[RMDB]
RNA sequence: GGGAACGACUCGAGUAGAGUCGAAAAGACGCCUGAUGGCGAACGUGCGCAAGAUAAGAAUGGUGGUAUAUACUGCCGAGAAUAACUAAUGGACGGCAGAGCGCACGGACCACCAUAGUCCACCAGAGGUGGACUGGUGGUUCGCCACCAGUCCACCAAAAGAAACAACAACAACAAC
Reactivity to DMS in 0.01 (KOAc 150mM, MgCl2 10mM, bicine 150mM(pH8.5), 24C), signal-to-noise 7, nucleotides 027 to 126: g010a130c040g020c030c010u020g030a150u040g020g020c020g020a080a070c010g010u000g000c000g030c010a180a100g000a150u050a070a070g000a060a060u010g010g000u000g000g000u000a120u030a100u010a110c010u000g000c000c010g000a080g010a160a090u030a080a120c220u030a140a110u020g000g000a130c010g010g000c000a010g010a140g010c020g000c010a000c000g000g000a090c050c020a130c080c080a080u020a140g010u020c010c010a020c010c000a120g010a160
Reactivity to 2A3 in 0.01 (KOAc 150mM, MgCl2 10mM, bicine 150mM(pH8.5), 24C), signal-to-noise 9, nucleotides 027 to 126: g070a010c020g020c020c030u260g200a210u300g030g010c000g010a010a010c010g010u010g000c000g000c030a070a060g030a300u160a150a060g080a120a070u080g000g020u010g000g030u030a110u000a020u030a170c000u000g000c010c010g020a030g060a060a170u240a110a010c100u150a160a070u150g120g080a050c000g000g000c000a000g000a010g040c000g000c000a010c000g000g000a000c010c000a020c000c010a030u080a020g080u000c010c000a010c000c010a050g020a040
The record gives the reactivity of an RNA of 177 nucleotides to DMS and 2A3. It was measured as part of the RMDB library OK1LIB. For DMS, 28,542 sequencing reads were counted.